[RMDB]
RNA sequence: GGGAACGACUCGAGUAGAGUCGAAAAGAUAUGGAGCGCUUCCGUGCGAUCGGAAACGAUCGAACUACACGACAGAACUACGCUCCUAAGUCAAAUCCAUCUUGAGAGUUCGCUCUCAAGAUGGAAACAAAAAGAUCUUGUUCGCAAGAUCUUUUUGAAAAGAAACAACAACAACAAC
Reactivity to DMS in 0.01 (KOAc 150mM, MgCl2 10mM, bicine 150mM(pH8.5), 24C), signal-to-noise 8, nucleotides 027 to 126: g010a030u000a300u010g000g000a010g020c010g010c130u010u000c030c010g020u000g000c010g000a010u000c000g000g000a100a070a160c010g000a010u000c010g000a060a030c070u020a300c020a020c010g000a150c140a160g010a060a050c090u020a080c010g000c000u000c000c000u000a020a100g010u000c030a070a130a140u000c000c000a000u000c000u000u000g000a020g000a020g010u000u010c220g010c010u000c000u000c000a000a000g000a000u000g000g000a000a050a100
Reactivity to 2A3 in 0.01 (KOAc 150mM, MgCl2 10mM, bicine 150mM(pH8.5), 24C), signal-to-noise 5, nucleotides 027 to 126: g020a010u060a050u170g010g000a000g000c020g010c060u060u000c050c000g010u000g020c000g000a010u000c010g020g010a090a050a030c010g020a000u020c000g020a050a030c070u250a040c090a010c030g190a050c090a180g060a080a040c080u140a030c260g000c000u000c000c000u020a160a020g030u010c030a010a040a140u020c000c000a010u000c010u000u010g000a010g000a000g030u090u180c250g040c130u000c000u000c000a000a000g000a000u000g000g000a000a000a000

Source: RMDB library TTRDEL, as collected in RNAgym. An RNA of 177 nucleotides, treated with DMS and 2A3 and read out base by base. DMS adducts were read by reverse transcription with MarathonRT. For 2A3 the reverse transcriptase was SuperScript II with manganese. The RNA was probed in 150 mM KOAc, 10 mM MgCl2 and 150 mM bicine (pH 8.5) at 24 C.